[RMDB]
RNA sequence: GGGAACGACUCGAGUAGAGUCGAAAAGCGCUCCUGAACGUGACUUCAGAAGAGGGGCCCCGACAAGUUAGAUUGUCGAGGCGACAAAUUGGUCAGUCUGGGCAAUCUAACUGACCAAUCGCCGGGGCGUUGAGUCACGUCAACAACCCUCGAGCGACUCAAAAUUAAUCUUCGGAUUAAUUUUGAGAAAAGAAACAACAACAACAAC
Reactivity to 2A3 in 0.01 (KOAc 150mM, MgCl2 10mM, bicine 150mM(pH8.5), 24C), signal-to-noise 3, nucleotides 027 to 156: g060c040g000c030u020c040c020u060g050a080a010c010g000u020g010a010c020u170u080c300a150g050a270a030g030a180g090g040g030g000c040c000c000c000g010a020c030a040a000g010u030u020a010g010a010u000u000g010u010c060g070a000g000g020c010g000a000c010a020a290a300u170u160g190g010u020c060a080g020u020c040u070g040g010g000c010a010a000u000c000u000a000a000c000u000g000a000c000c000a110a130u110c090g010c010c000g010g000g000g020c020g030u060u060g000a000g000u010c010a000c000g020u000c010a010a060c020a010a080c010c000c000u040c020g000a020g000c010g040a030
Reactivity to DMS in 0.01 (KOAc 150mM, MgCl2 10mM, bicine 150mM(pH8.5), 24C), signal-to-noise 1, nucleotides 027 to 156: g020c020g040c020u010c000c040u000g000a080a020c010g030u020g000a040c020u000u000c070a170g000a110a120g030a130g010g010g060g010c000c000c010c000g030a040c010a070a040g010u020u000a060g000a140u000u000g020u010c000g000a010g000g000c010g020a060c040a110a060a170u000u000g050g020u000c020a090g040u000c000u000g040g010g010c030a100a040u000c010u000a020a000c000u000g010a170c110c050a120a110u000c130g010c020c020g020g030g000g010c050g010u010u020g010a040g000u000c020a010c010g000u000c000a030a070c000a100a080c010c010c030u000c000g010a150g020c020g010a180